[RMDB]
RNA sequence: GGGAACGACUCGAGUAGAGUCGAAAAGAUAUGGACGCCGUGGUGGGAGAAACUGUAUCGGAAACGAUACGCGUUUCGACGAUCACCGCGUCCUAAGUCAAAAGGUGCACUGUUCGCAGUGCACCAAGAUAUAUGAAUUGUUCGCAAUUCAUAUAUCAAAAGAAACAACAACAACAAC
Reactivity to 2A3 in 0.01 (KOAc 150mM, MgCl2 10mM, bicine 150mM(pH8.5), 24C), signal-to-noise 8, nucleotides 027 to 126: g010a010u060a030u120g000g000a000c020g020c090c120g140u040g020g030u050g050g060g010a060g000a010a020a000c030u050g000u010a010u000c000g010g020a080a030a020c010g000a000u000a010c020g010c120g030u000u000u010c020g010a080c030g150a000u010c000a000c010c000g000c000g000u000c000c000u000a010a010g030u010c020a010a030a070a210g000g000u000g000c000a000c000u010g080u130u140c300g050c180a000g000u000g000c000a000c000c000a000a000
Reactivity to DMS in 0.01 (KOAc 150mM, MgCl2 10mM, bicine 150mM(pH8.5), 24C), signal-to-noise 9, nucleotides 027 to 126: g000a070u000a300u010g000g010a020c010g040c010c300g030u000g020g030u000g000g010g010a300g000a020a010a010c010u000g000u000a000u000c000g000g000a110a090a150c010g000a010u000a000c010g010c300g020u000u000u000c000g010a300c070g010a010u000c000a000c010c300g010c000g000u000c000c000u000a000a070g000u000c030a100a080a120a110g000g010u000g000c000a000c000u000g010u000u010c260g010c000a010g020u000g000c000a000c000c000a010a010
Structure probing data (2A3 and DMS) for a 177-nucleotide construct. It was measured as part of the RMDB library TTRDES. Values are in units of 0.01, from 0 to 300, in steps of 10.